This 177-nucleotide RNA was probed chemically with DMS and 2A3.
2A3 is a SHAPE reagent: it acylates the 2'-hydroxyl of flexible nucleotides of all four kinds.
The data come from the RNA Mapping Database (RMDB), library OK1LIB.
For DMS, 6,165 sequencing reads were counted.
DMS adducts were read by reverse transcription with MarathonRT.
For 2A3 the reverse transcriptase was SuperScript II with manganese.
RNA sequence: GGGAACGACUCGAGUAGAGUCGAAAAAACGCGCUGGGCGCGCUGACCGGCAACAUGGCCGUCCAGCAGGUGCGCGCCGGCCUGAAGGCCAUCUACCUGUCGGGCUGGCAGGUCGCCGGCGAUGCCAGCAUGUUGCCAAGUUCGCUUGGCAACAUGCAAAAGAAACAACAACAACAAC
Reactivity to DMS in 0.01 (KOAc 150mM, MgCl2 10mM, bicine 150mM(pH8.5), 24C), signal-to-noise 3, nucleotides 027 to 126: a070a050c070g000c080g030c060u010g000g000g000c010g000c100g040c010u020g000a140c050c020g000g000c020a090a070c030a070u060g010g000c000c040g020u000c010c000a040g000c000a090g010g050u000g010c160g020c130g010c030c090g000g020c040c030u010g010a170a050g000g020c070c070a090u040c110u020a160c000c000u000g010u010c050g010g010g010c000u030g010g000c000a020g010g010u020c060g030c000c010g000g000c010g020a070u010g000c010c020a170
Reactivity to 2A3 in 0.01 (KOAc 150mM, MgCl2 10mM, bicine 150mM(pH8.5), 24C), signal-to-noise 6, nucleotides 027 to 126: a000a000c050g030c010g000c050u140g020g030g040c040g030c040g000c050u030g060a160c030c000g020g010c020a050a040c030a210u180g090g000c000c000g000u020c010c010a010g010c000a010g040g020u100g010c100g000c050g010c050c040g010g020c010c010u130g050a170a100g010g020c040c020a100u060c050u130a070c010c000u120g090u110c030g010g040g020c040u100g040g000c000a010g000g050u100c020g000c000c000g010g010c010g040a040u130g050c010c010a010